[RMDB]
RNA sequence: GGGAACGACUCGAGUAGAGUCGAAAAGCCAUUCCUAUAGGUAUUGCAAUGGGCUUAAAUCCUAUAUGGGUUUAUGUAUUUAGUGUAAUAGGUUCUACAUUGGUAUCGAUUCCCUUGAUAUUGACAUGAGCACCUGACGGUUCGCCGUCAGGUGCUCAAAAGAAACAACAACAACAAC
Reactivity to 2A3 in 0.01 (KOAc 150mM, MgCl2 10mM, bicine 150mM(pH8.5), 24C), signal-to-noise 1, nucleotides 027 to 126: g000c090c000a110u240u150c000c000u300a110u000a040g000g000u040a000u300u140g050c090a040a070u040g220g000g000c060u000u040a000a000a000u000c040c040u000a040u060a020u300g060g000g000u000u110u000a150u150g060u000a240u040u170u040a020g020u000g000u090a110a110u000a130g000g000u000u000c000u060a170c060a300u000u060g010g010u110a300u020c000g260a300u000u000c000c000c000u000u000g090a090u070a000u000u170g000a000c000a110u000